[RMDB]
RNA sequence: GGGAACGACUCGAGUAGAGUCGAAAAGUGAUGCCUGUGAAGAUCACCAGCCCCAUCGAGUAACGGGCGGCAGCGCCUGCGCCGGUGGCGAUUAUCAGCGGCACCACGCCAAGCGCCAUGGCGGCUACGUCCAUUUACGUUUCGACGUAAAUGGACGAAAAGAAACAACAACAACAAC
Reactivity to DMS in 0.01 (KOAc 150mM, MgCl2 10mM, bicine 150mM(pH8.5), 24C), signal-to-noise 2, nucleotides 027 to 126: g010u010g000a030u000g000c050c020u000g020u010g030a130a250g000a070u010c000a010c050c090a090g000c050c050c010c050a080u030c060g000a090g000u030a070a190c070g010g000g000c000g010g000c300a060g020c000g020c010c020u000g020c100g010c020c070g020g060u010g020g000c010g010a070u000u000a080u010c240a140g010c070g000g000c050a080c100c060a130c080g000c010c060a050a070g000c080g010c000c060a120u010g020g050c060g020g000c030u000a140
Reactivity to 2A3 in 0.01 (KOAc 150mM, MgCl2 10mM, bicine 150mM(pH8.5), 24C), signal-to-noise 2, nucleotides 027 to 126: g010u000g020a020u050g120c050c100u190g090u090g110a050a040g040a020u010c000a020c090c070a030g070c010c020c010c000a110u110c060g090a090g060u070a110a050c100g020g030g000c000g010g000c070a090g100c040g000c000c000u030g000c030g000c030c010g080g000u010g000g010c010g010a010u120u120a170u220c070a010g080c030g030g000c030a020c030c020a030c070g060c020c010a030a000g030c010g000c010c030a040u120g080g000c030g010g030c020u080a050
An RNA of 177 nucleotides, treated with DMS and 2A3 and read out base by base. For DMS the reverse transcriptase was MarathonRT. The RNA was probed in 150 mM KOAc, 10 mM MgCl2 and 150 mM bicine (pH 8.5) at 24 C. For DMS, 1,375 sequencing reads were counted. For 2A3 the reverse transcriptase was SuperScript II with manganese. The 2A3 profile rests on 1,923 reads.